RNA sequence: GGGAACGACUCGAGUAGAGUCGAAAAGAUAUGGAAUGAUCUUACUGGAGAGCGCCUUUCGGAAACGAAAGGAUGCUCUAUGAAGGUAAGAGUCAUUCCUAAGUCAAACGCAGCCUUCGGGCUGCGACAAUGACCAAUUCUUCGGAAUUGGUCAUUGAAAAGAAACAACAACAACAAC
Reactivity to 2A3 in 0.01 (KOAc 150mM, MgCl2 10mM, bicine 150mM(pH8.5), 24C), signal-to-noise 2, nucleotides 027 to 126: g030a020u060a040u230g000g000a000a010u010g010a010u000c000u020u000a000c010u040g010g030a020g010a000g000c040g010c010c010u000u010u010c020g000g060a110a090a060c010g010a010a000a010g030g000a020u060g020c000u000c010u020a040u010g010a020a010g000g010u010a010a000g010a040g040u010c010a020u000u000c010c000u000a140a000g020u000c050a150a030a060c020g000c000a000g010c000c000u100u210c300g130g000g000c000u000g010c010g000a010
Reactivity to DMS in 0.01 (KOAc 150mM, MgCl2 10mM, bicine 150mM(pH8.5), 24C), signal-to-noise 3, nucleotides 027 to 126: g000a060u000a300u010g010g000a020a000u000g010a110u000c010u020u000a000c010u010g000g000a010g010a020g030c000g010c000c000u010u000u000c000g010g000a170a110a110c010g010a010a000a000g010g030a020u010g040c000u010c000u000a080u020g000a220a250g010g000u000a000a030g010a040g020u000c000a010u000u010c000c000u010a020a110g010u010c030a120a090a220c020g020c000a000g010c010c000u000u010c230g060g000g030c010u000g000c000g010a050

An RNA of 177 nucleotides, treated with 2A3 and DMS and read out base by base.
Reactivities are given for positions 27 through 126.
Conditions: 150 mM KOAc, 10 mM MgCl2 and 150 mM bicine (pH 8.5), 24 C.